[RMDB]
RNA sequence: GGGAACGACUCGAGUAGAGUCGAAAAGAAUAGGCGAAACUCUCUCGACGCCGAAAAAGCUACGAAAUCUCAGAAAAUGAGAUGAACGUGUGUACGAAGUGCACACGGAAAGAGAGAAAGUAGCGAAGGGUACAUACAAGUUCGCUUGUAUGUACCCAAAAGAAACAACAACAACAAC
Reactivity to DMS in 0.01 (KOAc 150mM, MgCl2 10mM, bicine 150mM(pH8.5), 24C), signal-to-noise 4, nucleotides 027 to 126: g010a110a100u040a080g010g000c010g000a140a190a100c070u020c010u000c000u020c050g000a180c170g000c000c020g010a040a050a040a070a230g000c010u000a080c080g010a060a170a040u000c000u010c000a030g000a050a040a100a090u000g010a010g000a020u000g010a170a070c000g050u000g010u000g000u000a010c050g000a190a140g020u000g040c030a020c000a000c000g000g000a070a050a080g000a030g020a040g010a070a090a040g000u000a030g000c000g000a110a100
Reactivity to 2A3 in 0.01 (KOAc 150mM, MgCl2 10mM, bicine 150mM(pH8.5), 24C), signal-to-noise 4, nucleotides 027 to 126: g110a040a090u200a130g040g010c030g020a060a040a070c040u070c010u000c000u000c040g010a020c040g010c020c010g040a000a020a050a000a020g020c030u030a040c000g030a140a060a040u000c000u010c020a040g100a070a280a030a100u110g000a060g020a020u010g000a030a020c000g000u000g000u000g020u050a020c090g300a280a050g010u000g000c040a000c020a000c000g010g020a040a080a000g070a000g010a000g000a010a070a010g020u000a000g000c000g050a070a050